This 177-nucleotide RNA was probed chemically with 2A3. For 2A3 the reverse transcriptase was SuperScript II with manganese. The reactions ran in a buffer of 150 mM KOAc, 10 mM MgCl2 and 150 mM bicine (pH 8.5), at 24 C.
RNA sequence: GGGAACGACUCGAGUAGAGUCGAAAAGGAUGCAGCAGACUGAAGAAAUUCAGACAUCCCGCAACCUGCGAUUAUCGCAAGGUCAAGGCAAAGUCCGGUAAUGGCGUUCUGAAUACCAGAGAUAAUUCUAGCAGCAACAGUUCGCUGUUGCUGCUAGAAAAGAAACAACAACAACAAC
Reactivity to 2A3 in 0.01 (KOAc 150mM, MgCl2 10mM, bicine 150mM(pH8.5), 24C), signal-to-noise 2, nucleotides 027 to 126: g000g000a020u000g000c030a090g070c000a000g060a020c010u000g000a000a000g020a020a170a010u020u000c000a000g000a020c010a030u040c010c010c000g000c000a020a000c000c000u000g000c010g010a070u120u190a290u190c060g020c010a060a130g030g010u000c080a180a050g050g000c050a010a060a060g020u080c000c000g050g000u020a000a020u020g120g000c000g000u000u000c000u030g060a020a020u050a170c020c000a060g010a000g020a090u050a040a040u050u000